An RNA of 177 nucleotides, treated with DMS and read out base by base. For DMS the reverse transcriptase was MarathonRT. The reactions ran in a buffer of 150 mM KOAc, 10 mM MgCl2 and 150 mM bicine (pH 8.5), at 24 C. The DMS profile rests on 1,665 reads.
RNA sequence: GGGAACGACUCGAGUAGAGUCGAAAAGGGCGCUCCCCGAUCUGGCGCGCGCAACGAGGUGCGCACUAUCCAUUCGAGGUGAACUGGACUCCUUGAUGCUCAGGCCGGUGCGGUUUGUCGAGAAAGGUAAGGUUGUUACGUUCGCGUAACAACCUUAAAAAGAAACAACAACAACAAC
Reactivity to DMS in 0.01 (KOAc 150mM, MgCl2 10mM, bicine 150mM(pH8.5), 24C), signal-to-noise 2, nucleotides 027 to 126: g000g000g020c070g020c030u000c040c000c010c020g000a060u000c060u020g010g000c070g010c100g020c030g030c090a100a130c150g010a080g020g010u000g000c030g000c040a010c030u000a080u000c050c000a110u010u000c040g020a200g000g020u000g010a030a060c070u000g010g010a060c050u000c030c010u000u020g020a060u000g000c110u000c050a040g000g000c090c090g020g020u010g010c060g010g010u000u000u000g000u000c040g000a210g000a050a050a060g010g000